[RMDB]
RNA sequence: GGGAACGACUCGAGUAGAGUCGAAAAAAGGCACUCCCAAGGCAAUAACUAGUUGACCGGGCGGGUACUGCGUCCCGCAAUCUUGCACUAACGACAUCUAGUUAGCGAGUUUCGUGCGACUUACUGCGUAGCAUUUUGAAUUCGUUCAAAAUGCUACAAAAGAAACAACAACAACAAC
Reactivity to DMS in 0.01 (KOAc 150mM, MgCl2 10mM, bicine 150mM(pH8.5), 24C), signal-to-noise 6, nucleotides 027 to 126: a060a070g000g010c040a040c050u000c010c020c010a170a110g010g010c030a090a090u000a030a020c040u000a040g000u000u000g000a090c070c020g000g010g020c020g010g000g000u030a070c150u020g000c090g010u010c020c020c030g000c030a060a040u010c080u020u020g020c070a070c050u020a090a090c060g000a120c070a040u020c040u010a020g000u000u000a040g010c140g000a060g000u000u010u020c130g010u000g000c040g010a110c090u010u020a080c060u000g010c300
Reactivity to 2A3 in 0.01 (KOAc 150mM, MgCl2 10mM, bicine 150mM(pH8.5), 24C), signal-to-noise 9, nucleotides 027 to 126: a000a000g160g020c060a040c060u060c010c000c010a020a030g060g000c020a040a070u060a090a060c070u050a050g040u030u040g110a200c050c040g030g030g020c030g010g000g010u060a090c070u110g050c030g060u060c010c010c000g000c000a010a060u080c050u070u130g020c050a030c090u100a110a020c060g090a050c020a080u040c030u030a010g030u050u010a030g050c040g040a040g030u030u070u130c070g000u050g030c020g040a040c030u080u200a050c030u140g060c050